Structure probing data (DMS and 2A3) for a 177-nucleotide construct.
It was measured as part of the RMDB library M2PK50.
RNA sequence: GGGAACGACUCGAGUAGAGUCGAAAAACCUCUAAGUUCGCUUAGAGGUAAUGAACGCUGCAAAAAGCAGCGCGCUCAGCGGAGCACGCAAAAGCAACGCUAGAACACCAUUCUUCGGAAUGGUGAAAGACUCACUACGAUUCGUCGUAGUGAGUCUAAAAGAAACAACAACAACAAC
Reactivity to DMS in 0.01 (KOAc 150mM, MgCl2 10mM, bicine 150mM(pH8.5), 24C), signal-to-noise 2, nucleotides 027 to 126: a060c000c000u010c000u000a010a000g000u000u010c220g070c000u010u000a000g000a020g000g010u000a000a000u010g030a070a130c020g010c000u020g000c020a090a120a110a120a190g000c000a060g020c020g020c110g000c110u000c080a060g020c050g000g000a300g000c010a020c140g000c270a050a020a110a090g000c010a020a110c040g000c020u000a070g010a140a140c010a010c000c000a000u000u010c000u000u000c150g000g010a010a000u000g000g010u000g000a010a080
Reactivity to 2A3 in 0.01 (KOAc 150mM, MgCl2 10mM, bicine 150mM(pH8.5), 24C), signal-to-noise 2, nucleotides 027 to 126: a000c000c000u000c010u010a000a020g010u040u120c140g040c140u010u010a010g010a020g040g010u010a000a030u110g010a050a000c010g000c000u010g040c030a030a200a200a250a100g010c010a010g010c010g000c010g060c010u110c050a020g040c030g050g000a040g030c030a020c090g220c050a020a100a050a050g030c010a000a060c020g000c000u040a040g060a160a020c010a010c000c000a020u010u000c010u050u030c210g140g000a020a000u000g000g010u000g000a010a000
DMS adducts were read by reverse transcription with MarathonRT. Conditions: 150 mM KOAc, 10 mM MgCl2 and 150 mM bicine (pH 8.5), 24 C. For DMS, 1,084 sequencing reads were counted. Values are in units of 0.01, from 0 to 300, in steps of 10.